RNA sequence: GGGAACGACUCGAGUAGAGUCGAAAAGCACCACCUGCCGAACCCGUUCGUUACUUUUGUGCGCGAGCGGCUUCAGAUACCGGUUAUCAGCUGGACGGUACGGGAUCGCGAGAUGCAAAAGUACAGACGUACCAGUCCAUUUCGAUGGACUGGUACGAAAAGAAACAACAACAACAAC
Reactivity to DMS in 0.01 (KOAc 150mM, MgCl2 10mM, bicine 150mM(pH8.5), 24C), signal-to-noise 2, nucleotides 027 to 126: g010c060a160c070c080a100c070c120u000g010c020c010g000a060a170c110c010c010g040u000u000c090g020u000u010a050c020u000u000u010u020g010u000g050c220g000c010g020a200g020c010g010g020c040u020u000c030a070g020a200u000a010c000c020g010g040u020u030a070u010c120a100g020c090u010g010g000a060c040g010g010u000a000c020g000g000g010a080u000c020g000c030g000a160g020a110u000g000c010a010a020a040a050g000u010a050c100a130g000a170
Reactivity to 2A3 in 0.01 (KOAc 150mM, MgCl2 10mM, bicine 150mM(pH8.5), 24C), signal-to-noise 1, nucleotides 027 to 126: g010c020a030c130c000a060c000c080u060g000c010c020g000a020a030c000c030c010g010u070u070c050g050u070u060a030c010u000u060u060u120g020u010g010c150g000c000g080a000g030c020g000g000c000u030u060c010a030g020a120u000a030c020c010g040g050u140u100a170u130c050a020g100c030u100g040g040a040c010g000g000u010a000c000g000g000g050a040u050c010g000c010g030a070g000a080u100g000c040a060a000a000a000g020u030a010c010a020g120a030
The record gives the reactivity of an RNA of 177 nucleotides to DMS and 2A3. The RNA was probed in 150 mM KOAc, 10 mM MgCl2 and 150 mM bicine (pH 8.5) at 24 C.